The record gives the reactivity of an RNA of 177 nucleotides to 2A3 and DMS.

RNA sequence: GGGAACGACUCGAGUAGAGUCGAAAAAAAACUCGCCAAUCCUAGCAUCCAAGGUAUGUACGUAUGUAGAGUUGGAAUACGCUUAACGCCUGUCAUAUGGAGAUCUGCAUAUAUGUAAAUUUAAAAGUGAUAGGACAAUUUUCGAAUUGUCCUAUCAAAAAGAAACAACAACAACAAC
Reactivity to 2A3 in 0.01 (KOAc 150mM, MgCl2 10mM, bicine 150mM(pH8.5), 24C), signal-to-noise 2, nucleotides 027 to 126: a000a000a000a000c040u000c000g000c020c000a020a030u000c000c010u040a000g000c010a030u000c030c010a070a000g170g010u070a030u160g110u050a000c030g040u070a020u130g060u020a030g000a020g070u050u050g030g000a060a050u060a020c050g010c040u050u050a020a000c000g000c010c000u050g060u070c020a030u020a060u200g040g020a030g010a030u060c020u040g000c020a020u050a000u030a010u200g060u050a110a170a090u180u240u190a060a200a000a020g040
Reactivity to DMS in 0.01 (KOAc 150mM, MgCl2 10mM, bicine 150mM(pH8.5), 24C), signal-to-noise 4, nucleotides 027 to 126: a030a030a070a050c080u010c040g000c050c040a110a100u010c010c020u000a100g000c050a060u000c050c040a080a070g010g000u000a050u010g010u000a050c040g010u000a010u000g000u000a060g000a100g010u000u000g010g000a160a040u000a060c070g020c070u000u010a100a090c100g010c010c030u010g000u000c110a060u010a080u000g010g000a100g010a070u000c030u000g010c030a030u010a060u000a040u010g010u010a060a040a120u000u000u010a060a060a070a100g010
For 2A3 the reverse transcriptase was SuperScript II with manganese.